[RMDB]
The data come from the RNA Mapping Database (RMDB), library TTRDEL. This 177-nucleotide RNA was probed chemically with DMS and 2A3. The DMS profile rests on 610 reads.
RNA sequence: GGGAACGACUCGAGUAGAGUCGAAAAGAUAUGGAAUCUCAGAGAUGUGCAUACGAAUUCGGAAACGAACUAUAUGUAUACAUCGACGAAGAGAUUCCUAAGUCAAACGGAAGGUUCGCCUUCCGAACGUCGGAAUCUAGUUCGCUAGAUUCCGACGAAAAGAAACAACAACAACAAC
Reactivity to DMS in 0.01 (KOAc 150mM, MgCl2 10mM, bicine 150mM(pH8.5), 24C), signal-to-noise 1, nucleotides 027 to 126: g000a040u000a300u000g000g000a010a000u000c010u000c000a150g020a160g060a020u000g020u000g000c000a010u000a030c180g010a060a240u000u000c030g000g010a140a100a130c030g000a030a020c040u000a290u000a000u000g000u000a130u000a120c010a010u000c030g000a140c250g000a120a110g000a010g000a000u000u030c000c010u000a010a190g000u000c000a030a050a200c010g000g000a010a010g000g020u000u030c180g010c000c000u000u000c000c010g020a030a020
Reactivity to 2A3 in 0.01 (KOAc 150mM, MgCl2 10mM, bicine 150mM(pH8.5), 24C), signal-to-noise 1, nucleotides 027 to 126: g000a020u050a020u240g000g000a030a000u010c000u040c000a010g030a000g000a060u010g010u000g030c030a000u030a040c110g190a190a300u010u000c010g010g000a070a010a040c010g000a010a000c020u030a010u000a000u160g000u000a210u020a110c010a020u000c060g300a300c020g050a100a010g110a040g000a010u000u000c000c000u030a070a020g020u040c040a180a000a040c010g000g000a000a000g000g030u090u200c300g100c070c000u000u000c000c000g010a050a000
The 2A3 profile rests on 1,533 reads.
For DMS the reverse transcriptase was MarathonRT.
2A3 adducts were read by reverse transcription with SuperScript II with manganese.
Conditions: 150 mM KOAc, 10 mM MgCl2 and 150 mM bicine (pH 8.5), 24 C.